[RMDB]
Chemical mapping of a 177-nucleotide RNA with 2A3 and DMS. For DMS, 9,730 sequencing reads were counted. The data come from the RNA Mapping Database (RMDB), library M2PK90. Conditions: 150 mM KOAc, 10 mM MgCl2 and 150 mM bicine (pH 8.5), 24 C.

RNA sequence: GGGAACGACUCGAGUAGAGUCGAAAAACUUUGGCCGACGCUGCUAGGCGGGUGCGCACUGCUGUCUGGCCCGGCGCCGCGCUAGGCCGCACGUUUCGCUCUGCGGAGGGUAACCGGGCUGAAAUAAUUCAAUUUCUAUGUUCGCAUAGAAAUUGAAAAAAGAAACAACAACAACAAC
Reactivity to 2A3 in 0.01 (KOAc 150mM, MgCl2 10mM, bicine 150mM(pH8.5), 24C), signal-to-noise 2, nucleotides 027 to 126: a000c050u110u050u100g030g000c010c000g020a020c050g020c060u080g040c050u050a060g060g000c020g000g030g010u120g030c040g000c030a030c080u070g030c020u050g060u130c060u070g050g000c000c000c020g050g010c020g000c030c020g060c000g020c090u040a050g050g020c000c000g000c000a030c090g030u000u060u090c120g010c000u020c020u030g000c030g030g000a060g020g050g000u010a040a020c010c010g000g000g020c020u030g080a090a100a060u140a040a110
Reactivity to DMS in 0.01 (KOAc 150mM, MgCl2 10mM, bicine 150mM(pH8.5), 24C), signal-to-noise 6, nucleotides 027 to 126: a080c100u000u010u000g020g000c010c020g020a080c070g020c040u000g020c050u010a120g010g010c020g010g000g030u000g010c070g020c090a090c070u000g000c050u000g000u000c070u010g010g000c010c050c030g020g010c170g020c040c060g020c060g010c050u000a080g020g010c010c020g000c060a040c180g000u000u000u010c090g010c030u000c050u000g000c030g010g010a100g010g000g010u000a050a100c040c020g000g000g010c010u000g000a050a060a080u010a070a160